The record gives the reactivity of an RNA of 170 nucleotides to 2A3 and DMS. The DMS profile rests on 65,380 reads. Source: RMDB library 15KLIB, as collected in RNAgym. Conditions: 150 mM KOAc, 10 mM MgCl2 and 150 mM bicine (pH 8.5), 24 C.
[RMDB]
RNA sequence: GGGAACGACUCGAGUAGAGUCGAAAAGUCUAUCUCCAUCUGGUCCGUUCGGGCCCUCUUCGCCGGGGGAGCCCCCUCUCCAUCCUUGUCUUUCUUUCCGAGAAUUCCUUUGAUGUUCCCUAGCCAGCAACACACUUCUUCGGAAGUGUGAAAAGAAACAACAACAACAAC
Reactivity to 2A3 in 0.01 (KOAc 150mM, MgCl2 10mM, bicine 150mM(pH8.5), 24C), signal-to-noise 9, nucleotides 027 to 129: g020u010c030u070a120u040c020u020c030c010a080u040c050u090g030g020u030c020c020g060u120u150c090g020g010g000c000c020c010u030c020u080u080c040g040c030c020g000g000g010g000g010a030g000c000c000c000c000c000u040c000u000c010c000a090u050c000c010u060u060g060u060c000u010u090u010c000u020u040u000c000c020g030a030g030a100a060u040u050c010c000u050u030u100g110a100u130g010u010u010c000c000c000u000a020g030c010c010a030g060c020a060a050
Reactivity to DMS in 0.01 (KOAc 150mM, MgCl2 10mM, bicine 150mM(pH8.5), 24C), signal-to-noise 7, nucleotides 027 to 129: g000u000c020u020a040u040c020u030c000c000a090u040c070u000g000g000u020c010c020g020u040u050c100g030g020g000c020c060c020u000c030u000u000c060g000c070c080g000g000g000g000g000a060g010c010c020c040c030c030u000c010u030c000c040a060u050c000c000u000u000g030u050c040u010u020u040c030u010u010u010c000c010g020a110g020a100a100u000u000c030c000u040u010u000g040a110u040g030u000u040c030c030c010u020a050g000c040c040a080g020c110a140a160